Description:
Structure probing data (DMS and 2A3) for a 207-nucleotide construct.
[RMDB]
RNA sequence: GGGAACGACUCGAGUAGAGUCGAAAAAGGACCACCCCUCGCCCCCUUUGCGCUGUCGCUUCGGCUACUACCCGGUGGAAACAACUGAAGCUCCCGAGAACCGCUUUUUCUCUAUCUUACUUGCUUCGGGGCGAGGGUGUUUAGCCCUUGGAACCGCCAUCUAAUAUGUCUUCGGACAUAUUAGAUGAAAAGAAACAACAACAACAAC
Reactivity to DMS in 0.01 (KOAc 150mM, MgCl2 10mM, bicine 150mM(pH8.5), 24C), signal-to-noise 1, nucleotides 027 to 156: a050g040g030a120c030c060a020c050c020c010c000u000c010g000c010c010c010c000c060u040u000u000g010c010g010c080u000g010u000c110g010c000u010u000c030g020g020c020u000a120c100u000a140c000c000c000g010g010u000g010g010a250a110a130c030a060a220c040u000g050a070a140g010c010u010c030c030c030g020a120g020a050a120c090c120g030c140u000u000u010u000u000c020u020c070u000a130u020c060u000u000a050c060u000u010g010c000u000u000c050g010g020g030g070c030g000a010g000g000g020u000g000u000u000u000a170g000c020c010c000u000u000g010g020a090a160c040c020g000c210
Reactivity to 2A3 in 0.01 (KOAc 150mM, MgCl2 10mM, bicine 150mM(pH8.5), 24C), signal-to-noise 2, nucleotides 027 to 156: a000g000g000a010c000c030a010c010c040c020c020u010c000g000c010c000c030c000c010u000u070u080g040c060g000c050u050g050u180c020g010c000u020u020c010g020g000c000u070a080c000u070a120c050c010c020g020g000u060g010g030a080a060a010c050a070a010c030u050g010a040a020g000c000u030c060c050c020g020a020g010a080a070c020c020g050c120u070u070u060u100u000c000u000c020u010a070u060c020u040u080a100c030u100u170g020c020u060u110c050g000g000g000g000c000g000a000g060g010g000u000g000u000u010u030a010g030c000c000c000u010u010g050g020a070a060c000c010g020c050
The 2A3 profile rests on 1,283 reads.
The DMS profile rests on 2,738 reads.